[RMDB]
RNA sequence: GGGAACGACUCGAGUAGAGUCGAAAAAAGCUAGUUAAGACCAAGGGAGGUGACAGGAGCUGGUGUCUGGUUUAGCUUGAGGAGUGAUGGGAGGCCUGAGGGAGUGAUGCCAAGUCUGAAACUGUCAUAAAUACCCGAAAUUCGUUUCGGGUAUUUAAAAAGAAACAACAACAACAAC
Reactivity to DMS in 0.01 (KOAc 150mM, MgCl2 10mM, bicine 150mM(pH8.5), 24C), signal-to-noise 5, nucleotides 027 to 126: a040a040g000c040u000a040g010u010u010a100a100g010a080c040c030a090a090g010g000g020a090g010g030u000g010a060c080a060g010g010a090g020c050u000g020g020u000g010u000c050u000g000g010u000u010u000a060g010c040u000u000g010a100g010g010a070g010u010g000a100u010g000g000g010a090g020g020c090c050u000g010a120g010g010g010a090g010u000g000a070u000g000c060c040a050a110g000u000c060u000g010a070a060a080c070u010g000u000c090a090
Reactivity to 2A3 in 0.01 (KOAc 150mM, MgCl2 10mM, bicine 150mM(pH8.5), 24C), signal-to-noise 1, nucleotides 027 to 126: a000a000g070c050u030a010g020u120u090a100a010g010a030c020c030a060a020g030g000g000a060g000g010u030g050a040c010a050g100g020a020g030c020u020g070g060u050g010u030c000u030g070g070u030u070u090a020g000c000u040u050g030a020g010g030a000g030u120g030a100u100g000g010g030a070g000g000c000c030u050g020a100g010g010g000a040g020u030g000a010u020g010c010c020a020a040g060u020c030u000g000a070a000a050c020u020g040u050c020a010
This 177-nucleotide RNA was probed chemically with DMS and 2A3. Source: RMDB library OK2TRN, as collected in RNAgym. The 2A3 profile rests on 1,749 reads. For DMS the reverse transcriptase was MarathonRT. Conditions: 150 mM KOAc, 10 mM MgCl2 and 150 mM bicine (pH 8.5), 24 C.